[RMDB]
This 177-nucleotide RNA was probed chemically with DMS.

RNA sequence: GGGAACGACUCGAGUAGAGUCGAAAAGGAACGUUGUUCGCAACGUUCCGUGCCGGAAACGGACAUGACGAUCGCGCGCAUGUCGGGAAACCGUAAUCGCGAGCAUCAUGGUGUUCGCACCAUGAAACUCAAUGGAACUCUUCGGAGUUCCAUUGAGAAAAGAAACAACAACAACAAC
Reactivity to DMS in 0.01 (KOAc 150mM, MgCl2 10mM, bicine 150mM(pH8.5), 24C), signal-to-noise 3, nucleotides 027 to 126: g010g010a000a010c020g020u000u000g010u000u020c230g010c010a000a000c010g010u000u000c000c000g010u000g030c030c000g000g000a060a080a140c020g000g010a030c020a020u000g000a120c000g000a050u000c030g050c020g000c060g000c010a010u000g000u000c040g000g010g000a090a100a150c300c020g000u000a080a060u000c040g000c010g000a000g000c300a110u000c010a000u000g000g000u000g010u000u010c170g030c010a000c000c030a020u000g000a030a080a140
Overview: It was measured as part of the RMDB library M2PK50.